[RMDB]
RNA sequence: GGGAACGACUCGAGUAGAGUCGAAAACAAAUGUGUCAAGUGCAUCAAGGAGAAGAUAGAGGAGAAACUCGAUUAGGCAAACAAGCCAAAAGGCAAGGAUACCCCUUCUCAAGCAUUGUUAGGUUUAACAUGAUCAUUCUUUCGAGAAUGAUCAUGUAAAAGAAACAACAACAACAAC
Reactivity to DMS in 0.01 (KOAc 150mM, MgCl2 10mM, bicine 150mM(pH8.5), 24C), signal-to-noise 6, nucleotides 027 to 126: c060a060a070a090u010g020u010g010u020c050a090a070g020u020g010c040a100u010c140a090a100g020g010a050g000a030a030g000a110u010a070g010a130g000g010a110g010a110a090a110c030u000c030g010a120u000u000a110g010g000c020a060a070a100c280a090a180g010c020c010a030a050a080a080g000g000c070a050a090g000g000a160u010a100c070c030c030c010u000u000c000u000c010a090a070g000c080a050u000u000g020u010u010a090g010g020u000u010u000a070
Reactivity to 2A3 in 0.01 (KOAc 150mM, MgCl2 10mM, bicine 150mM(pH8.5), 24C), signal-to-noise 4, nucleotides 027 to 126: c020a000a060a040u130g040u040g050u200c110a100a090g050u020g120c020a040u050c090a210a080g140g020a030g010a030a010g010a070u290a070g020a100g030g020a120g020a070a080a000c000u000c000g040a040u010u200a020g000g000c010a060a080a100c040a180a000g010c000c000a000a060a040a010g050g050c070a040a020g030g010a040u140a140c010c000c000c000u010u040c010u000c020a070a040g020c000a020u030u010g020u070u030a090g040g030u030u020u050a010

Structure probing data (DMS and 2A3) for a 177-nucleotide construct. Values cover nucleotides 27 to 126. For 2A3 the reverse transcriptase was SuperScript II with manganese. Source: RMDB libraries RFM100 and RFMREP, as collected in RNAgym.